[RMDB]
RNA sequence: GGGAACGACUCGAGUAGAGUCGAAAAUUGCUCUCUCCUUUCAUACAGUCAGCUGGUCCCUCUCCUCAGGUGUAGACCACCUAUUAUCAUUUUACCUGUUUUGAUUCUCUGAUGAGCAAAGUCCCAAGAUAACUUGAUCGUUCGCGAUCAAGUUAUCAAAAGAAACAACAACAACAAC
Reactivity to 2A3 in 0.01 (KOAc 150mM, MgCl2 10mM, bicine 150mM(pH8.5), 24C), signal-to-noise 2, nucleotides 027 to 126: u020u010g010c010u020c000u000c010u030c000c000u060u060u040c040a050u050a090c010a020g120u100c030a000g030c040u040g010g050u040c020c030c000u000c010u040c010c010u040c060a000g020g000u010g030u030a060g050a030c030c000a040c020c000u030a140u060u090a110u090c070a090u000u120u150u100a080c020c000u040g060u070u100u050u070g040a040u060u010c060u010c020u080g170a160u060g000a020g030c010a000a000a030g020u000c010c020c010a010a010
Reactivity to DMS in 0.01 (KOAc 150mM, MgCl2 10mM, bicine 150mM(pH8.5), 24C), signal-to-noise 1, nucleotides 027 to 126: u010u010g000c020u000c010u010c020u010c050c080u000u000u000c070a040u030a030c070a070g000u010c100a050g000c120u010g010g020u000c030c000c010u000c020u000c040c010u000c070a030g010g030u000g000u010a080g010a120c240c040a020c050c010u000a090u000u030a090u040c100a050u010u010u010u000a100c150c020u000g000u000u000u000u010g010a040u000u010c060u000c010u000g010a040u010g000a090g020c050a030a050a100g010u010c000c000c000a120a190

Background: The record gives the reactivity of an RNA of 177 nucleotides to 2A3 and DMS. 2A3 adducts were read by reverse transcription with SuperScript II with manganese. The RNA was probed in 150 mM KOAc, 10 mM MgCl2 and 150 mM bicine (pH 8.5) at 24 C. For DMS, 871 sequencing reads were counted. The data come from the RNA Mapping Database (RMDB), library RFMREP.